[RMDB]
RNA sequence: GGGAACGACUCGAGUAGAGUCGAAAAUCAGCACAGCGGCAGCCCAGUUCACCAAACUUCGCCGAGGCAUGGAUGAAAAGGAGUUUACAGUUCAAAUCAAAGAUGUAAGCUCAGCAUUUGGGCAUUGGCGUUCAUCUUUUUUCGAAAAGAUGAACGCAAAAGAAACAACAACAACAAC
Reactivity to 2A3 in 0.01 (KOAc 150mM, MgCl2 10mM, bicine 150mM(pH8.5), 24C), signal-to-noise 1, nucleotides 027 to 126: u030c020a000g040c050a040c000a060g000c010g130g020c010a050g000c040c020c000a020g050u020u020c040a060c050c050a180a100a090c030u110u080c140g060c110c050g000a020g030g050c060a020u050g030g070a080u040g060a070a100a060a040g120g010a000g020u020u010u000a020c000a050g040u100u110c050a040a070a200u140c040a130a140a100g040a010u050g010u010a010a000g010c000u010c000a000g030c010a060u050u080u040g050g000g000c000a000u000u110g130
Reactivity to DMS in 0.01 (KOAc 150mM, MgCl2 10mM, bicine 150mM(pH8.5), 24C), signal-to-noise 1, nucleotides 027 to 126: u000c030a070g000c040a060c070a040g030c040g060g020c020a140g000c020c020c050a140g010u000u000c000a050c080c030a000a160a140c130u010u010c070g000c090c080g010a080g030g020c080a040u010g000g020a030u000g020a070a060a030a150g020g000a010g000u000u000u000a020c000a020g020u000u000c020a050a100a150u030c190a070a090a120g000a110u000g010u000a020a020g000c000u010c010a080g010c070a070u000u000u000g020g000g010c060a090u000u020g030